Structure probing data (2A3 and DMS) for a 207-nucleotide construct. For DMS the reverse transcriptase was MarathonRT. The DMS profile rests on 2,490 reads. In probing experiments dimethyl sulfate is read out at A N1 and C N3, which are open when not base-paired. Reactivities are given for positions 27 through 156. 2A3 adducts were read by reverse transcription with SuperScript II with manganese. The reactions ran in a buffer of 150 mM KOAc, 10 mM MgCl2 and 150 mM bicine (pH 8.5), at 24 C. It was measured as part of the RMDB library M2RFPK.
RNA sequence: GGGAACGACUCGAGUAGAGUCGAAAAUUUAACGCCGUUUUAUUGGCGCAAAGGUUUACGGAUAAACAACUAAUAAUUAAACCUUUUGUGUGCGAAACGUGGUUGUUUAACGUACUCUUUAAUCGCUUUGGGGAUGUGUCCUUCGGGACACAUCCAAUCGGUAUUAUGAGUUCGCUCAUAAUACCGAAAAAGAAACAACAACAACAAC
Reactivity to 2A3 in 0.01 (KOAc 150mM, MgCl2 10mM, bicine 150mM(pH8.5), 24C), signal-to-noise 3, nucleotides 027 to 156: u040u050u030a090a000c020g040c020c000g070u070u100u100u220a100u040u220g020g020c030g000c010a060a040a000g040g010u030u030u040a010c060g010g070a210u080a120a040a030c020a040a020c020u070a070a050u120a110a090u180u060a080a050a070c030c000u030u100u160u250g150u080g010u050g050c100g030a000a000a120c100g040u050g000g000u030u040g000u000u000u030a010a020c020g000u000a010c010u000c010u080u060u100a130a140u100c050g050c060u060u110u200g060g070g000g000a000u000g000u000g000u000c000c000u020u010c180g060g000g000a000c010a000c000a000u000c000c000a000a000
Reactivity to DMS in 0.01 (KOAc 150mM, MgCl2 10mM, bicine 150mM(pH8.5), 24C), signal-to-noise 1, nucleotides 027 to 156: u000u010u010a100a030c010g000c050c000g000u010u000u000u000a180u020u030g020g030c010g070c040a090a110a080g000g020u000u000u000a030c010g010g030a260u010a050a040a030c020a010a050c000u000a060a100u000a070a160u000u000a060a110a010c000c000u000u000u000u020g000u010g020u000g010c040g010a120a100a140c150g000u000g020g030u000u000g000u000u000u000a030a100c010g000u000a050c080u000c020u000u000u000a070a090u000c060g010c070u010u010u000g030g030g000g000a020u010g020u000g030u000c000c000u000u000c300g070g040g010a020c000a010c000a020u000c010c000a010a020